[RMDB]
RNA sequence: GGGAACGACUCGAGUAGAGUCGAAAAUGUAGUCGGUCAGAUAGGUGCGACAGACCACCAUGGAAUUGACGAUAUCUAGGUCUUUGGCAAACACCAGCGGCGUCUUAAACUUUAUGAAGUCGUCCUGCCUGAGGAGAAUGGAUUCGUUCCUCCGCAGUACUCGGUAUGUGUUCGCACAUACCGAGUAAAAAGAAACAACAACAACAAC
Reactivity to 2A3 in 0.01 (KOAc 150mM, MgCl2 10mM, bicine 150mM(pH8.5), 24C), signal-to-noise 1, nucleotides 027 to 156: u110g020u100a070g060u010c050g020g000u020c000a000g030a150u040a150g080g000u020g030c060g010a080c110a060g010a020c040c010a010c030c020a060u100g000g070a140a090u120u090g040a000c000g020a020u020a060u150c020u000a000g000g010u020c000u030u010u090g110g000c030a060a040a130c070a060c010c040a010g100c050g070g040c000g020u030c010u020u050a120a060a020c050u140u140u010a150u300g110a030a050g000u010c000g000u010c000c040u020g000c000c020u000g000a020g010g010a010g000a000a100u180g020g050a080u040u130c030g010u020u050c000c010u070c000c000g070c000a010g040
Structure probing data (2A3) for a 207-nucleotide construct. 2A3 adducts were read by reverse transcription with SuperScript II with manganese. The RNA was probed in 150 mM KOAc, 10 mM MgCl2 and 150 mM bicine (pH 8.5) at 24 C.